An RNA of 177 nucleotides, treated with DMS and 2A3 and read out base by base. The reactions ran in a buffer of 150 mM KOAc, 10 mM MgCl2 and 150 mM bicine (pH 8.5), at 24 C. For 2A3 the reverse transcriptase was SuperScript II with manganese. The 2A3 profile rests on 4,193 reads.

RNA sequence: GGGAACGACUCGAGUAGAGUCGAAAAGUCACAAUGUUACCAUCUGAGUCAAUGCAAUCCCAAGGGAGGGACUCCCAGCUUCUUAAGGUCAGGGAACGCAUGACCAGUUUCAGGAAUGCGUUAGCCACCUUCCCUACAGGUUCGCCUGUAGGGAAGGAAAAGAAACAACAACAACAAC
Reactivity to DMS in 0.01 (KOAc 150mM, MgCl2 10mM, bicine 150mM(pH8.5), 24C), signal-to-noise 4, nucleotides 027 to 126: g010u010c100a040c080a030a100u000g010u010u020a150c040c020a050u000c060u000g020a100g020u000c030a040a050u000g020c040a090a270u000c000c000c020a050a140g000g000g000a040g010g000g000a090c080u000c020c020c020a280g000c050u000u000c100u010u000a070a110g010g000u000c110a130g000g020g010a020a050c270g010c000a020u000g010a090c020c020a070g020u000u010u020c180a140g000g000a290a080u000g010c030g000u000u000a080g010c040c060a150
Reactivity to 2A3 in 0.01 (KOAc 150mM, MgCl2 10mM, bicine 150mM(pH8.5), 24C), signal-to-noise 4, nucleotides 027 to 126: g100u070c030a010c040a100a100u110g020u060u110a120c020c030a020u040c020u040g040a070g070u030c040a110a140u040g010c010a040a090u020c010c010c000a060a090g020g000g000a020g090g100g090a100c030u000c000c000c000a030g010c010u070u030c030u150u250a160a080g060g010u090c110a060g020g010g050a040a010c030g000c010a010u020g070a140c010c000a010g020u010u080u140c080a050g000g030a060a050u060g000c000g060u030u040a020g080c010c000a000